[RMDB]
RNA sequence: GGGAACGACUCGAGUAGAGUCGAAAAUAUUGGGGUCCAUGGCUUGUGGAAGGCCCGUCAGGGACAAGCUCCCAACCGGAUUGUGACCACAACAAUUGAACAUCCAGGCGUGUUAGAAACAGUCAAACGAUAGAAAGCAAUUCGUUGCUUUCUAUCGAAAAGAAACAACAACAACAAC
Reactivity to 2A3 in 0.01 (KOAc 150mM, MgCl2 10mM, bicine 150mM(pH8.5), 24C), signal-to-noise 1, nucleotides 027 to 126: u210a070u030u070g020g020g010g010u000c000c000a000u030g050g060c110u030u060g000u000g060g040a160a070g060g020c000c000c000g050u050c050a100g040g000g000a000c080a130a070g020c090u020c000c010c010a030a010c030c010g020g020a020u020u140g090u110g120a090c000c000a020c020a030a020c040a060a050u030u110g000a010a000c010a070u020c000c020a020g050g000c080g080u130g040u030u080a130g140a140a280a050c020a010g050u050c030a010a060a050
Reactivity to DMS in 0.01 (KOAc 150mM, MgCl2 10mM, bicine 150mM(pH8.5), 24C), signal-to-noise 6, nucleotides 027 to 126: u010a100u000u000g010g010g010g000u000c000c020a050u000g000g020c180u000u010g010u000g000g020a190a150g000g010c020c010c010g000u010c180a250g010g000g010a040c030a100a140g010c150u000c000c000c010a040a080c220c040g010g000a110u000u000g010u010g010a140c010c020a030c010a030a040c070a080a080u000u000g000a070a060c070a080u000c010c020a070g010g000c140g010u000g000u010u000a080g000a130a080a050c050a050g010u000c250a050a060a150

Chemical mapping of a 177-nucleotide RNA with 2A3 and DMS. Conditions: 150 mM KOAc, 10 mM MgCl2 and 150 mM bicine (pH 8.5), 24 C. The data come from the RNA Mapping Database (RMDB), library OK2TST. Reactivities are given for positions 27 through 126.